RNA sequence: GGGAACGACUCGAGUAGAGUCGAAAAUAACAAAAACUUGUGAAGGAAGAUGAAUGCUUUGAUUAUGCAUGAAUCCAUAAUGAUAAAGUGCUAUUGAAUGAUCAAGUAAUUUGUAAGGUUUUUAUUAUACAAUGCCUGUGUUCGCACAGGCAUUGUAAAAAGAAACAACAACAACAAC
Reactivity to DMS in 0.01 (KOAc 150mM, MgCl2 10mM, bicine 150mM(pH8.5), 24C), signal-to-noise 2, nucleotides 027 to 126: u000a090a030c040a010a000a070a100a000c030u000u000g010u000g000a250a020g010g000a110a030g000a050u000g000a110a070u010g010c020u000u000u000g000a000u000u000a020u000g000c120a160u040g000a190a090u050c270c010a040u010a010a040u000g010a150u000a000a050a070g000u000g020c130u020a020u010u000g020a190a140u020g000a150u000c000a000a020g000u000a010a030u010u000u000g010u000a070a060g010g000u000u000u000u000u000a050u030u000a150
Reactivity to 2A3 in 0.01 (KOAc 150mM, MgCl2 10mM, bicine 150mM(pH8.5), 24C), signal-to-noise 2, nucleotides 027 to 126: u110a000a010c050a080a120a010a020a000c000u000u000g000u000g040a090a090g000g010a000a000g000a020u020g160a170a030u090g040c000u010u030u020g010a020u020u020a010u100g090c130a100u120g110a030a110u000c060c060a120u080a110a000u220g010a010u050a160a040a000g020u060g030c000u050a000u060u110g030a060a000u110g000a000u070c000a020a020g070u050a120a160u000u080u100g080u060a050a120g230g000u000u000u000u000u000a010u240u000a020